[RMDB]
RNA sequence: GGGAACGACUCGAGUAGAGUCGAAAAGCAGCAAAAAGCCACGUAGACAAAAUGCUAAGUGGCUGAGCAGUGAAAAUACAAAGUAAAAGUAUCAAGCAUUCUACUUUUUCAAUUUAUUUUCCGACUUACCACCUAGGGAAUUCGUUCCCUAGGUGGUAAAAGAAACAACAACAACAAC
Reactivity to 2A3 in 0.01 (KOAc 150mM, MgCl2 10mM, bicine 150mM(pH8.5), 24C), signal-to-noise 2, nucleotides 027 to 126: g010c090a000g000c030a060a050a000a000a000g010c000c000a010c000g030u010a010g070a140c030a100a290a040a010u270g010c020u000a070a000g000u000g000g000c000u010g000a000g000c050a020g020u090g150a010a010a010a010u050a000c100a080a010a000g020u030a000a020a000a000g000u000a010u250c130a120a090g100c060a130u190u020c020u040a000c000u000u010u000u010u040c060a110a110u030u020u010a030u000u010u050u000c020c000g050a030c010u000u000
Reactivity to DMS in 0.01 (KOAc 150mM, MgCl2 10mM, bicine 150mM(pH8.5), 24C), signal-to-noise 1, nucleotides 027 to 126: g000c030a180g000c000a050a290a070a120a070g000c000c000a000c000g060u020a010g000a070c110a030a030a160a080u140g000c000u000a000a040g010u000g000g000c000u000g000a070g000c000a140g000u000g000a000a000a000a000u000a000c020a060a000a130g000u000a000a060a070a000g000u060a000u030c140a070a050g030c290a160u040u000c150u000a030c000u040u000u000u000u000c000a050a300u000u000u000a000u000u020u070u000c000c030g000a290c210u000u000